Structure probing data (2A3 and DMS) for a 177-nucleotide construct. Reactivities are rounded to 0.1 and cut off at 0 and 3. For 2A3, 1,407 sequencing reads were counted. Conditions: 150 mM KOAc, 10 mM MgCl2 and 150 mM bicine (pH 8.5), 24 C. In probing experiments dimethyl sulfate is read out at A N1 and C N3, which are open when not base-paired. DMS adducts were read by reverse transcription with MarathonRT.

[RMDB]
RNA sequence: GGGAACGACUCGAGUAGAGUCGAAAAACGUGCUUGGAGAGAUGGGUUUGAACGUGGAAAGAAACUGGCAAUGAAGAGAAGGCGCAGGGGUUCUCUCGACCCAAGGAUUGGAAUGGCUCUUGCAGCAGCAUGGAUGGAUAUUCGUAUCCAUCCAUGCAAAAGAAACAACAACAACAAC
Reactivity to 2A3 in 0.01 (KOAc 150mM, MgCl2 10mM, bicine 150mM(pH8.5), 24C), signal-to-noise 2, nucleotides 027 to 126: a000c030g030u040g040c000u040u050g040g000a050g000a010g020a080u080g050g000g070u030u100u150g040a080a040c040g050u070g060g040a020a080a090g060a080a100a020c030u030g000g050c030a110a130u170g060a180a060g030a030g020a090a050g040g000c060g040c040a040g000g010g010g000u090u000c010u010c020u050c060g090a060c010c060c000a010a000g100g020a090u070u050g010g060a070a060u070g040g000c000u020c040u070u130g000c050a040g030c030a030
Reactivity to DMS in 0.01 (KOAc 150mM, MgCl2 10mM, bicine 150mM(pH8.5), 24C), signal-to-noise 2, nucleotides 027 to 126: a110c070g000u000g010c050u000u010g010g000a130g000a150g000a070u020g010g000g010u000u000u000g010a050a090c110g030u000g010g000a040a060a110g000a060a080a100c090u000g000g000c050a060a100u020g000a090a090g010a050g000a080a110g010g010c060g010c080a060g010g020g010g010u010u020c060u000c040u000c030g000a090c040c020c020a050a060g000g000a100u000u000g010g030a070a080u010g020g020c010u000c050u010u000g040c080a100g020c090a080